[RMDB]
Chemical mapping of a 177-nucleotide RNA with DMS and 2A3. The data come from the RNA Mapping Database (RMDB), library OK2TRN. Reactivities are given for positions 27 through 126. The RNA was probed in 150 mM KOAc, 10 mM MgCl2 and 150 mM bicine (pH 8.5) at 24 C. The 2A3 profile rests on 11,839 reads.
RNA sequence: GGGAACGACUCGAGUAGAGUCGAAAAGACUGGGCGAGAAUGUGACUUAAUCUAAGCUAUUGGUCUGGUGGCUGGGAGAGGAGGGCAGGCCAGCUCCUGUGGGAGGCCCGCGUGGCCGUGAAGGCAGCAUAGUCUACUUUUUCGAAAGUAGACUAUGAAAAGAAACAACAACAACAAC
Reactivity to DMS in 0.01 (KOAc 150mM, MgCl2 10mM, bicine 150mM(pH8.5), 24C), signal-to-noise 9, nucleotides 027 to 126: g010a090c060u000g010g010g010c050g020a080g010a090a070u010g010u000g010a090c060u010u010a100a100u010c110u010a080a100g000c060u000a080u000u000g010g010u000c030u000g010g020u000g010g010c070u000g000g000g000a120g010a130g010g000a090g000g000g010c060a050g010g010c030c040a070g010c040u000c020c020u010g010u000g020g010g010a120g000g010c020c010c040g020c150g010u010g010g010c010c020g010u000g010a080a120g010g010c060a110g010
Reactivity to 2A3 in 0.01 (KOAc 150mM, MgCl2 10mM, bicine 150mM(pH8.5), 24C), signal-to-noise 5, nucleotides 027 to 126: g040a030c050u050g000g010g030c040g030a070g050a140a100u140g040u080g110a080c030u080u160a080a100u130c080u070a070a030g030c010u030a060u130u130g040g020u010c030u030g020g030u050g060g000c070u050g010g010g010a110g010a040g060g030a030g010g010g000c030a010g040g000c020c000a010g000c010u030c020c020u100g010u130g050g010g020a030g020g000c010c010c000g080c040g050u160g020g000c000c000g000u040g040a040a030g040g000c010a010g010

DMS adducts were read by reverse transcription with MarathonRT.